An RNA of 177 nucleotides, treated with 2A3 and DMS and read out base by base. The reactions ran in a buffer of 150 mM KOAc, 10 mM MgCl2 and 150 mM bicine (pH 8.5), at 24 C. DMS adducts were read by reverse transcription with MarathonRT. For DMS, 54,997 sequencing reads were counted. The 2A3 profile rests on 26,142 reads.

[RMDB]
RNA sequence: GGGAACGACUCGAGUAGAGUCGAAAAGCUCGCGCGUACCGGCUCGAGUGGUACACGUUUGGGCGGUGAAGGUCCUGGUUAGGCCCGCGAAAGGCGCGUGUUAGGCGGGCCUAUGCGCGCCAAAGAAGCAUCACGCGAGGUUCGCCUUGCGUGGUGCAAAAGAAACAACAACAACAAC
Reactivity to 2A3 in 0.01 (KOAc 150mM, MgCl2 10mM, bicine 150mM(pH8.5), 24C), signal-to-noise 9, nucleotides 027 to 126: g000c000u010c010g000c000g000c000g010u010a020c010c000g080g030c040u030c040g060a050g100u100g020g010u020a010c040a010c020g010u040u140u180g020g010g000c050g020g010u100g060a090a030g050g010u040c010c010u020g020g020u040u130a060g000g040c010c030c010g030c020g050a110a070a040g020g000c020g000c000g010u060g130u070u050a040g040g000c050g010g010g010c000c000u000a000u000g000c000g000c000g000c000c000a010a080a030g090a070a020
Reactivity to DMS in 0.01 (KOAc 150mM, MgCl2 10mM, bicine 150mM(pH8.5), 24C), signal-to-noise 7, nucleotides 027 to 126: g010c000u000c020g000c010g000c060g010u020a020c020c020g010g010c030u000c050g000a080g010u000g000g010u010a010c020a040c010g010u020u030u040g020g000g000c010g010g010u010g000a110a100g000g010u010c000c010u010g000g010u010u010a100g010g010c010c020c020g010c080g010a070a090a100g000g000c010g000c010g000u000g000u020u020a050g000g000c030g010g000g000c000c010u000a000u000g000c010g010c060g000c010c020a070a090a090g010a130a160